The data come from the RNA Mapping Database (RMDB), library OK2TRN.
Chemical mapping of a 177-nucleotide RNA with DMS and 2A3.
The DMS profile rests on 1,092 reads.
DMS (dimethyl sulfate) methylates the pairing face of unpaired adenines and cytosines.
The RNA was probed in 150 mM KOAc, 10 mM MgCl2 and 150 mM bicine (pH 8.5) at 24 C.
DMS adducts were read by reverse transcription with MarathonRT.
RNA sequence: GGGAACGACUCGAGUAGAGUCGAAAAAUGGGGAGGCCGAGCUAGGAUUUAGGUCACAUAAAAUAAUCCGAAGGGUGUGUGGCGAGCAUUACCGUCUUAUAGUCGAAAGGCUCACGGUAGGAAUCGCCCACUGUGUGCAGUUCGCUGCACACAGUGGAAAAGAAACAACAACAACAAC
Reactivity to DMS in 0.01 (KOAc 150mM, MgCl2 10mM, bicine 150mM(pH8.5), 24C), signal-to-noise 1, nucleotides 027 to 126: a060u010g000g010g000g030a160g020g000c060c000g000a050g030c060u020a240g000g030a040u000u000u000a000g000g010u000c030a130c240a080u000a030a020a050a220u000a000a010u000c010c020g000a070a140g000g010g000u000g000u000g000u000g020g000c000g010a030g020c040a030u000u000a000c000c000g000u000c160u000u000a090u000a010g000u010c020g000a120a090a120g000g000c000u000c260a030c020g000g020u020a020g010g000a020a070u000c040g020c030
Reactivity to 2A3 in 0.01 (KOAc 150mM, MgCl2 10mM, bicine 150mM(pH8.5), 24C), signal-to-noise 1, nucleotides 027 to 126: a020u080g010g010g000g000a060g000g000c000c020g010a010g000c000u020a010g010g020a080u010u000u040a020g000g010u030c030a010c060a200u140a010a020a000a010u030a000a010u010c040c010g020a050a070g300g080g010u020g000u000g010u030g030g000c000g010a000g000c010a000u000u050a000c020c020g030u010c010u090u300a300u270a120g000u010c030g020a100a030a000g010g020c020u030c020a010c000g030g010u020a010g000g030a060a020u020c000g030c010